The record gives the reactivity of an RNA of 207 nucleotides to DMS and 2A3. For 2A3, 7,248 sequencing reads were counted. Reactivities are rounded to 0.1 and cut off at 0 and 3. 2A3 adducts were read by reverse transcription with SuperScript II with manganese. It was measured as part of the RMDB library OK3TST.
[RMDB]
RNA sequence: GGGAACGACUCGAGUAGAGUCGAAAAUCAUCUCGCCGGCGAUGCGCGCCAUCGGCGCCGUCAUCGGCUGGGUGUGGAACUCCCUGAUCAAGCCAGUGUGGGACUCAUUCCGACGCAGCCUCGACAUCCUCGGUGAAGCCUUCAAAUUCCUGUGGAAAUCAAUUACCUAAUUCGUUAGGUAAUUGAUAAAAGAAACAACAACAACAAC
Reactivity to DMS in 0.01 (KOAc 150mM, MgCl2 10mM, bicine 150mM(pH8.5), 24C), signal-to-noise 3, nucleotides 027 to 156: u000c020a020u000c000u000c300g020c010c000g030g040c040g010a020u000g020c140g050c020g060c010c020a080u010c190g050g060c010g070c010c010g000u000c000a030u010c010g020g000c010u010g000g010g000u020g010u000g010g020a140a160c070u000c010c010c000u000g010a100u010c040a080a110g020c040c010a130g020u000g010u000g000g030g010a050c050u000c050a120u000u010c000c010g000a100c030g010c060a130g000c020c020u000c020g010a100c020a090u000c020c010u000c030g020g030u010g020a080a160g000c020c020u000u010c050a060a100a170u020u000c020c010u000g030u000g010g000a110a170
Reactivity to 2A3 in 0.01 (KOAc 150mM, MgCl2 10mM, bicine 150mM(pH8.5), 24C), signal-to-noise 6, nucleotides 027 to 156: u060c000a000u000c010u020c030g010c000c010g010g000c010g000a000u000g030c040g000c000g010c230c020a250u240c250g020g000c000g000c000c010g020u000c000a010u010c000g000g000c010u030g000g000g000u010g010u030g030g030a040a050c040u020c000c000c010u030g030a080u100c090a080a020g040c020c040a060g020u030g010u060g110g020g040a060c020u030c090a070u170u030c030c010g020a020c050g000c050a020g030c010c020u070c030g030a040c020a070u040c000c030u050c030g020g030u060g050a050a010g040c000c020u100u100c040a050a100a230u070u040c020c020u070g040u100g080g030a050a160